[RMDB]
RNA sequence: GGGAACGACUCGAGUAGAGUCGAAAAGGUAGCCACUUCGGUGGCUACCAAAGAGAUAGUACCUAUUGUGUUCCUGUGUAGGUACUCAUGACAGGAUGUCAAAAACAUGAUUCUUCGGAAUCAUGAACAUUUAGAUACACUUCGGUGUAUCUAAAUGAAAAGAAACAACAACAACAAC
Reactivity to DMS in 0.01 (KOAc 150mM, MgCl2 10mM, bicine 150mM(pH8.5), 24C), signal-to-noise 8, nucleotides 027 to 126: g000g010u000a000g010c010c000a010c000u000u010c180g020g030u000g010g010c000u000a000c000c000a020a030a080g010a150g000a110u010a020g020u000a010c000c000u000a010u000u010g010u010g010u000u000c000c000u000g010u000g010u010a000g010g000u000a000c010u000c180a060u000g000a030c010a180g010g010a130u010g020u010c010a060a080a070a090a170c010a010u000g000a010u000u000c000u000u010c190g020g000a010a010u000c000a000u000g000a080a120
Reactivity to 2A3 in 0.01 (KOAc 150mM, MgCl2 10mM, bicine 150mM(pH8.5), 24C), signal-to-noise 8, nucleotides 027 to 126: g000g010u000a000g010c000c000a020c010u040u060c190g110g010u000g000g000c000u000a000c000c000a000a000a000g030a000g010a020u080a080g000u010a000c000c000u010a030u040u150g080u020g010u040u010c010c000u030g030u030g010u040a000g000g000u010a000c010u010c020a110u110g020a010c020a040g250g130a220u190g030u040c020a030a030a010a040a030c000a010u010g000a010u010u010c010u030u060c200g110g010a000a000u000c000a000u010g000a010a010